Structure probing data (2A3) for a 177-nucleotide construct. 2A3 adducts were read by reverse transcription with SuperScript II with manganese.
RNA sequence: GGGAACGACUCGAGUAGAGUCGAAAAUAGUGAAGAUUGACCAUCUCACAAAAGCUGUUACGUGCUUGUAACACACUACACACUCGUUUUGUAAUCGAGAAGUAGUUGCAAGAACGGUCCUCUCAUUUCCAUAAACGCACUUCGGUGCGUUUAUGGAAAAAGAAACAACAACAACAAC
Reactivity to 2A3 in 0.01 (KOAc 150mM, MgCl2 10mM, bicine 150mM(pH8.5), 24C), signal-to-noise 2, nucleotides 027 to 126: u160a010g020u020g050a200a070g000a040u000u070g010a020c000c000a000u010c000u000c000a010c010a010a140a000a010g050c110u050g040u050u040a000c030g020u060g010c030u020u080g010u110a120a010c000a000c010a000c040u060a010c010a000c000a010c020u000c040g040u000u060u020u140g280u260a090a070u140c020g000a010g070a060a000g000u000a000g000u000u060g000c010a000a010g050a140a050c040g020g020u030c060c000u010c000u010c020a030u000u000